An RNA of 207 nucleotides, treated with 2A3 and DMS and read out base by base. Source: RMDB library M2RFOK, as collected in RNAgym. The 2A3 profile rests on 2,304 reads.

RNA sequence: GGGAACGACUCGAGUAGAGUCGAAAAGCUCUGGAAUUGAGGCCCCUCUAACAAUAAUCUAAAACUACUUCGCAGAGUAAUCUGCCGAAUCGUAGGAUGCCCAUUACUAUCUAUUUUUGGAGCAUCUAAAACUGUCAGUGCUUCGGCACUGACAGAACUACAUCAACAAGUUCGCUUGUUGAUGUAGAAAAGAAACAACAACAACAAC
Reactivity to 2A3 in 0.01 (KOAc 150mM, MgCl2 10mM, bicine 150mM(pH8.5), 24C), signal-to-noise 4, nucleotides 027 to 156: g020c010u010c010u040g100g120a220a160u110u080g020a050g010g030c010c000c010c020u090c100u120a130a100c070a040a140u230a070a030u090c050u130a030a050a010a160c010u020a010c000u000u010c010g000c000a010g010a000g060u090a090a130u000c000u000g070c140c040g020a020a020u080c060g000u010a030g020g020a000u000g000c000c000c000a010u030u030a030c030u090a090u240c040u090a230u110u120u000u020u020g020g010a110g010c000a000u000c000u050a000a020a050a150c000u000g000u000c000a000g000u010g000c000u010u070c130g040g000c010a000c000u000g000a000c000a000g000a000a010
Reactivity to DMS in 0.01 (KOAc 150mM, MgCl2 10mM, bicine 150mM(pH8.5), 24C), signal-to-noise 1, nucleotides 027 to 156: g040c010u010c030u000g030g000a100a050u010u010g020a080g000g010c020c000c020c030u010c040u010a120a120c040a090a120u000a070a120u010c050u010a060a070a110a130c010u000a070c030u010u000c050g020c030a030g020a080g060u010a090a100u000c010u000g010c000c090g000a010a060u000c110g000u000a120g000g010a010u000g040c010c000c020a090u020u010a080c100u010a080u010c090u000a190u020u000u000u000u000g010g020a110g000c030a020u010c040u000a030a040a140a150c000u020g030u010c010a000g060u000g000c000u010u020c300g000g000c000a000c000u000g020a000c010a010g000a030a090